[RMDB]
RNA sequence: GGGAACGACUCGAGUAGAGUCGAAAAAAAUUGUUUUGGUGAGUGGUGGAAGUUCUUGGAGUGAUCAUAUUGCUCUAAGUCUCUGGUUGAGUCGGGAAGAAACUCAAUUAAACAUUCAAAACAUUCACGUUACGGAUACGUUCGCGUAUCCGUAACGAAAAGAAACAACAACAACAAC
Reactivity to DMS in 0.01 (KOAc 150mM, MgCl2 10mM, bicine 150mM(pH8.5), 24C), signal-to-noise 1, nucleotides 027 to 126: a050a080a030u010u000g020u000u000u030u000g010g040u000g040a110g000u000g000g010u010g010g000a050a040g040u010u000c020u000u000g000g000a050g000u000g010a060u010c210a060u030a300u000u000g030c010u000c040u000a020a020g040u010c080u000c030u000g040g000u000u000g000a030g010u010c020g000g000g000a060a040g000a150a030a000c020u000c040a000a010u010u000a020a070a140c050a080u000u030c070a010a040a050a020c020a110u000u000c070a080
Reactivity to 2A3 in 0.01 (KOAc 150mM, MgCl2 10mM, bicine 150mM(pH8.5), 24C), signal-to-noise 1, nucleotides 027 to 126: a000a000a050u200u050g000u060u030u010u010g020g000u090g040a090g030u040g020g080u070g010g000a130a030g040u170u000c000u000u020g000g020a010g020u050g010a010u050c120a030u070a060u170u080g020c020u010c000u010a010a010g010u030c030u010c010u010g000g000u000u040g010a000g000u010c000g050g030g050a050a050g030a020a040a010c010u010c000a000a000u020u090a090a120a000c060a030u100u130c020a040a070a050a040c000a000u060u050c070a050

The data come from the RNA Mapping Database (RMDB), library OK2TRN. An RNA of 177 nucleotides, treated with DMS and 2A3 and read out base by base. The DMS profile rests on 889 reads. For DMS the reverse transcriptase was MarathonRT. For 2A3, 1,318 sequencing reads were counted. The RNA was probed in 150 mM KOAc, 10 mM MgCl2 and 150 mM bicine (pH 8.5) at 24 C.